Source: RMDB library M2PK50, as collected in RNAgym. Chemical mapping of a 177-nucleotide RNA with 2A3 and DMS. Reactivities are given for positions 27 through 126. For 2A3 the reverse transcriptase was SuperScript II with manganese. The 2A3 profile rests on 1,107 reads. The RNA was probed in 150 mM KOAc, 10 mM MgCl2 and 150 mM bicine (pH 8.5) at 24 C.
RNA sequence: GGGAACGACUCGAGUAGAGUCGAAAACUACAUAAAUUCGUUUAUGUAGCAUCGGGGACGCGCAGACUCCCCGUCAGACGGGUCUAGCCUUCCAAGCUCUGCACUCAACAGCUUUCGAGCUGUUGAAAAGGCUCAUAGGAUUCGUCCUAUGAGCCUUAAAAGAAACAACAACAACAAC
Reactivity to 2A3 in 0.01 (KOAc 150mM, MgCl2 10mM, bicine 150mM(pH8.5), 24C), signal-to-noise 1, nucleotides 027 to 126: c000u030a000c020a020u040a010a060a030u060u080c130g070u030u020u020a020u020g000u010a000g070c020a100u180c000g000g000g010g000a010c060g110c050g050c260a000g020a050c020u000c000c010c030c020g030u050c060a000g010a030c010g020g020g080u070c130u190a070g130c000c000u050u020c070c040a060a000g010c080u030c000u040g000c020a030c020u010c010a000a000c010a000g000c000u000u080u180c130g060a000g020c000u000g000u010u000g010a010a020
Reactivity to DMS in 0.01 (KOAc 150mM, MgCl2 10mM, bicine 150mM(pH8.5), 24C), signal-to-noise 2, nucleotides 027 to 126: c000u010a000c000a000u010a000a000a020u010u000c250g010u000u010u000a020u000g000u000a000g020c100a100u000c030g010g000g010g020a010c180g000c240g010c020a000g000a020c050u000c000c000c000c000g030u010c160a060g010a070c120g000g020g020u000c120u000a160g020c020c010u000u000c040c260a030a040g000c080u000c010u000g010c010a170c200u000c020a000a000c000a010g010c000u000u000u010c170g010a030g010c000u000g000u000u000g000a000a030